[RMDB]
RNA sequence: GGGAACGACUCGAGUAGAGUCGAAAACCUAAAUACUGGAUAAGUGUAAGGGAGUCUUUGGCCCAAGACAAUGGGAAGGUGGGCUUAGAAGCAGCCACCCUUUAACGAGUUCGUAACAGAUCACCCAGUUGUUGUCAUAGUUCGCUAUGACAACAACAAAAGAAACAACAACAACAAC
Reactivity to 2A3 in 0.01 (KOAc 150mM, MgCl2 10mM, bicine 150mM(pH8.5), 24C), signal-to-noise 7, nucleotides 027 to 126: c010c000u020a040a090a040u180a040c080u060g050g000a060u050a170a050g010u030g030u090a050a090g010g010g000a090g020u010c030u070u070u080g090g000c000c000c000a000a020g060a040c040a050a140u130g030g050g040a050a020g080g020u050g010g060g000c020u040u080a070g030a100a020g030c030a020g040c010c010a110c010c000c010u010u030u030a040a010c020g020a020g040u060u040c020g010u030a070a030c020a060g040a060u090c030a060c030c020c010a000
Reactivity to DMS in 0.01 (KOAc 150mM, MgCl2 10mM, bicine 150mM(pH8.5), 24C), signal-to-noise 3, nucleotides 027 to 126: c010c000u000a020a150a090u020a050c050u000g010g020a110u010a090a140g020u000g000u010a080a210g020g020g010a160g000u010c020u000u010u020g030g000c010c000c010a190a060g020a070c110a120a110u000g000g000g000a070a070g000g010u000g000g010g000c020u000u040a110g020a100a100g030c210a120g010c000c030a050c020c000c010u010u000u000a040a140c070g000a080g010u010u000c040g000u000a060a130c130a110g000a020u000c100a090c030c010c020a090